[RMDB]
RNA sequence: GGGAACGACUCGAGUAGAGUCGAAAAGAUAUGGAUGGAGCUGAUGUAGGACCGUAGUCGGAAACGACUACUAGUACUACAUUCAGCGUUGAAAUCCUAAGUCAAAACAGUGCCUUCGGGCACUGAACUGCCAUGCAUAGUUCGCUAUGCAUGGCAGAAAAGAAACAACAACAACAAC
Reactivity to DMS in 0.01 (KOAc 150mM, MgCl2 10mM, bicine 150mM(pH8.5), 24C), signal-to-noise 1, nucleotides 027 to 126: g010a040u010a300u000g000g000a000u000g000g000a100g030c020u020g000a050u000g020u000a000g010g000a030c150c240g020u000a000g010u010c010g000g000a070a100a190c000g000a020c000u000a000c000u010a040g020u000a090c000u000a010c000a000u000u000c000a000g010c000g000u000u000g000a060a110a010u000c010c000u040a030a190g000u000c040a110a110a100a160c030a020g000u000g000c000c000u000u030c210g010g010g030c010a000c000u020g000a000a140

Chemical mapping of a 177-nucleotide RNA with DMS. Source: RMDB library TTRDEL, as collected in RNAgym. DMS adducts were read by reverse transcription with MarathonRT.